[RMDB]
RNA sequence: GGGAACGACUCGAGUAGAGUCGAAAAUACGCAGUGCCAACUUAUAUACGUCACUCAUUCUUCUAAGUGAAUAUUUCGGAUCAUGAAAUCGUUGUGUGACCGGAUGUUUAUUUGGCAGGAAAGGAUAGCUCGCCGUAUACUUCGGUAUACGGCGAGCAAAAGAAACAACAACAACAAC
Reactivity to 2A3 in 0.01 (KOAc 150mM, MgCl2 10mM, bicine 150mM(pH8.5), 24C), signal-to-noise 2, nucleotides 027 to 126: u300a050c050g060c080a000g110u110g010c050c040a110a050c050u270u080a090u030a070u120a190c060g030u080c090a020c020u040c010a050u030u000c000u000u030c000u000a000a000g000u000g090a000a000u040a040u070u030u300c120g040g140a300u040c000a000u020g070a040a080a050u140c300g010u050u270g050u000g020u000g110a000c000c000g010g000a000u000g000u040u000u000a010u000u000u000g000g000c040a000g000g000a040a190a000g000g110a040u000a020
About this RNA: An RNA of 177 nucleotides, treated with 2A3 and read out base by base. The RNA was probed in 150 mM KOAc, 10 mM MgCl2 and 150 mM bicine (pH 8.5) at 24 C. The data come from the RNA Mapping Database (RMDB), library OK1LIB.